[RMDB]
RNA sequence: GGGAACGACUCGAGUAGAGUCGAAAAGAUAUGGAGUCCGACCAGGGAGAUUAAGAGUCGGAAACGACUCGAUGAUCGACGAUCUGGCGGACUCCUAAGUCAAACGAGUUCGCUUCGGCGAACUCGACUCUGCUUAUACGUUCGCGUAUAAGCAGAGAAAAGAAACAACAACAACAAC
Reactivity to DMS in 0.01 (KOAc 150mM, MgCl2 10mM, bicine 150mM(pH8.5), 24C), signal-to-noise 3, nucleotides 027 to 126: g000a050u010a300u010g000g020a000g000u000c000c000g000a220c000c010a020g000g000g000a060g010a010u010u000a140a300g000a020g010u010c000g000g000a080a040a180c000g000a020c000u000c000g000a130u030g000a010u000c000g000a070c300g020a050u000c000u000g000g010c010g010g000a000c000u000c000c010u000a010a070g010u010c040a120a130a210c040g010a030g000u000u000c010g010c030u000u000c270g050g010c000g000a000a000c000u000c010g030a050
Reactivity to 2A3 in 0.01 (KOAc 150mM, MgCl2 10mM, bicine 150mM(pH8.5), 24C), signal-to-noise 2, nucleotides 027 to 126: g030a030u060a050u150g000g010a000g000u020c030c020g050a300c300c020a020g030g060g040a130g010a030u000u030a070a050g000a010g000u000c010g030g040a040a020a010c020g010a000c000u000c010g030a060u300g000a000u020c000g110a170c040g010a080u020c000u010g000g000c000g000g010a000c010u000c000c000u010a000a000g000u000c010a000a000a120c020g000a000g010u020u010c000g000c020u080u170c300g090g000c000g000a000a000c000u000c000g000a000